This 207-nucleotide RNA was probed chemically with 2A3. For 2A3 the reverse transcriptase was SuperScript II with manganese.

[RMDB]
RNA sequence: GGGAACGACUCGAGUAGAGUCGAAAACUGUCAGACACCAUAUCGAAGGCAUCAAAUUGGUGGACGAAGAAGGAAACGACGUGACCCCUGAAAAAUUAAGACAGGUGCAACGUGAAAAAGGCUUGCACGGCCGUUCAUUAGAUGACCCAAAAUCAUAAGCACUCGAUAAUUUCGAUUAUCGAGUGCUAAAAGAAACAACAACAACAAC
Reactivity to 2A3 in 0.01 (KOAc 150mM, MgCl2 10mM, bicine 150mM(pH8.5), 24C), signal-to-noise 1, nucleotides 027 to 156: c080u100g030u170c060a020g020a130c000a000c000c000a030u010a100u040c060g060a160a030g020g040c110a080u020c020a030a140a170u120u030g010g000u000g010g010a010c110g080a010a090g010a080a040g080g000a010a040a040c060g000a030c000g010u000g050a030c060c000c000c000u000g060a090a000a000a070a070u120u120a030a030g040a030c030a040g000g020u010g000c000a020a060c000g040u060g110a000a050a000a000a000g000g000c000u060u150g020c040a000c000g000g010c050c020g010u000u000c020a040u000u220a020g010a120u040g030a080c060c000c000a000a180a000a060u280c300a000u300a090
Conditions: 150 mM KOAc, 10 mM MgCl2 and 150 mM bicine (pH 8.5), 24 C.
Source: RMDB library OK3TST, as collected in RNAgym.
High 2A3 reactivity points to a flexible backbone, as in loops and unpaired stretches.